[RMDB]
RNA sequence: GGGAACGACUCGAGUAGAGUCGAAAAAAAAAGGACCUACAGCCGAGCGAGUGACUGAAAACGGCAAAGUCACGAAGCAUCGUUAUACCUAAAUGGACGUAGCGAAAUAAGAGUUGUUCCCAGUAAAUAUAAGAUUUCAAUUCGUUGAAAUCUUAUAAAAAGAAACAACAACAACAAC
Reactivity to DMS in 0.01 (KOAc 150mM, MgCl2 10mM, bicine 150mM(pH8.5), 24C), signal-to-noise 2, nucleotides 027 to 126: a060a070a110a080a090g000g000a020c020c010u000a000c000a210g050c140c130g000a080g000c020g000a170g010u010g000a010c000u000g000a050a030a070a070c140g000g000c070a050a090a010g000u000c000a000c000g000a090a150g020c010a160u000c010g020u000u000a010u000a040c030c010u010a030a020a060u010g010g010a070c080g020u000a020g020c000g000a030a070a030u000a050a170g000a020g020u000u000g000u000u000c000c000c010a060g010u010a020a040a120
Reactivity to 2A3 in 0.01 (KOAc 150mM, MgCl2 10mM, bicine 150mM(pH8.5), 24C), signal-to-noise 2, nucleotides 027 to 126: a000a000a000a000a000g100g000a010c000c000u000a010c010a020g030c050c040g060a010g050c030g040a050g040u000g020a000c010u050g030a120a100a010a060c080g130g040c040a150a070a000g000u010c010a000c020g000a070a000g020c000a030u010c000g010u000u010a000u040a060c030c010u100a250a220a110u220g010g040a120c100g000u010a000g010c000g040a080a010a100u090a110a040g000a020g000u020u000g000u000u040c000c000c000a020g000u020a000a030a000
Chemical mapping of a 177-nucleotide RNA with DMS and 2A3. The 2A3 profile rests on 1,681 reads.